[RMDB]
RNA sequence: GGGAACGACUCGAGUAGAGUCGAAAAGAUAUGGAUCUAGUGAGCGAUGAGAAUAGAUCGGAAACGAUCUGAUUCGAGCUCACAGGGAUCCUAAGUCAAAAGACUCGCGUGUUCGCACGCGAGUCAACAUAUUUGCUUGGUUCGCCAAGCAAAUAUGAAAAGAAACAACAACAACAAC
Reactivity to 2A3 in 0.01 (KOAc 150mM, MgCl2 10mM, bicine 150mM(pH8.5), 24C), signal-to-noise 2, nucleotides 027 to 126: g010a000u020a000u040g000g000a000u020c040u060a040g020u030g000a000g000c010g280a300u230g030a150g010a020a010u020a000g010a010u000c010g000g000a000a010a000c010g010a000u000c020u120g080a040u010u010c000g020a020g010c000u020c000a000c010a000g040g000g010a000u000c000c000u010a000a000g010u000c030a040a030a100a220g020a000c000u000c020g020c030g000u010g050u100u160c300g000c140a000c000g040c030g010a000g000u000c000a000a000
Reactivity to DMS in 0.01 (KOAc 150mM, MgCl2 10mM, bicine 150mM(pH8.5), 24C), signal-to-noise 6, nucleotides 027 to 126: g010a020u000a030u020g000g000a000u000c000u010a120g020u000g000a010g020c010g020a220u010g010a190g010a010a010u000a020g010a000u000c000g010g000a010a010a030c000g000a010u000c000u010g010a050u000u000c000g010a020g020c000u000c000a000c000a300g010g010g010a000u000c000c000u000a000a110g000u000c000a110a130a140a160g010a010c000u000c000g030c000g050u000g010u010u030c290g020c000a010c010g020c000g000a010g010u000c000a040a130